[RMDB]
RNA sequence: GGGAACGACUCGAGUAGAGUCGAAAAACAAAUGUGUGAUUACAGAGGAGACACACCUUGAAGAAACAACAGAGAGCCAACAGAAUGGUGAAGAAGGCACGUCUACUCCUGAGGACAAGGAGAGUGGGCAGGAGGGGGUCGACAGUAUGGCAGAGGACUAACUGUCAGCUUUCGAGCUGACAGUUAGAAAAGAAACAACAACAACAAC
Reactivity to 2A3 in 0.01 (KOAc 150mM, MgCl2 10mM, bicine 150mM(pH8.5), 24C), signal-to-noise 1, nucleotides 027 to 156: a000c020a010a030a040u150g010u000g000u010g040a090u060u170a100c070a060g020a040g040g120a030g030a030c060a020c010a020c050c060u050u220g040a110a010g030a040a170a020c060a040a000c050a030g140a000g060a000g050c000c000a030a000c000a010g150a070a120u160g000g020u090g000a030a030g000a010a010g050g000c060a000c090g020u020c010u070a090c000u020c040c010u040g010a020g020g090a030c050a060a090g000g030a010g000a000g020u100g010g000g000c000a030g040g040a030g000g000g000g000g000u010c010g000a020c030a040g010u030a060u080g000g000c040a020g000a020g000g010a010